RNA sequence: GGGAACGACUCGAGUAGAGUCGAAAAAUUCAGGGUCAGCUCUGGUUUAACUAAGGCAUCUCACAAAACAUUGUUCUCUAAGAGCACUAAAUUCCAUCUUGCAUGCCAGUUGAGAGUGGUAUGUUAGCUGGGACUUGAAACUGGGUAUGUGAGCUGAAUACUAAUUCGGUUUCGACCGAAUUAGUAUAAAAGAAACAACAACAACAAC
Reactivity to DMS in 0.01 (KOAc 150mM, MgCl2 10mM, bicine 150mM(pH8.5), 24C), signal-to-noise 2, nucleotides 027 to 156: a130u000u010c020a050g010g000g020u000c030a090g040c000u000c010u010g000g010u010u000u000a090a130c100u010a110a100g010g020c020a070u000c020u010c020a130c080a110a100a080a150c090a120u000u000g000u000u000c050u000c060u010a050a190g000a080g030c060a100c040u000a070a020a090u020u010c000c010a040u000c020u000u010g020c000a010u000g000c040c030a020g030u000u010g010a290g000a160g060u000g010g050u000a050u010g010u000u010a010g020c070u000g020g010g000a030c050u000u000g010a190a040a040c040u000g030g040g000u000a110u000g000u000g020a020g000c060u000g000a160
Reactivity to 2A3 in 0.01 (KOAc 150mM, MgCl2 10mM, bicine 150mM(pH8.5), 24C), signal-to-noise 4, nucleotides 027 to 156: a010u160u100c020a020g020g010g060u050c040a040g050c030u000c020u050g050g050u050u080u080a070a060c070u080a060a050g080g000c020a060u030c060u020c050a060c040a050a150a100a040c020a080u090u120g020u060u030c020u010c050u150a160a050g020a020g040c040a040c070u130a070a080a100u110u030c040c000a010u020c020u000u010g000c000a000u010g000c010c020a030g020u070u130g100a120g000a020g090u010g000g030u100a070u110g060u070u070a050g000c020u030g020g020g030a020c020u020u040g030a030a000a040c020u060g130g050g000u080a040u030g020u000g000a010g000c030u030g050a050
The data come from the RNA Mapping Database (RMDB), library OK3TST. An RNA of 207 nucleotides, treated with DMS and 2A3 and read out base by base. The 2A3 profile rests on 2,662 reads. 2A3 adducts were read by reverse transcription with SuperScript II with manganese. The reactions ran in a buffer of 150 mM KOAc, 10 mM MgCl2 and 150 mM bicine (pH 8.5), at 24 C.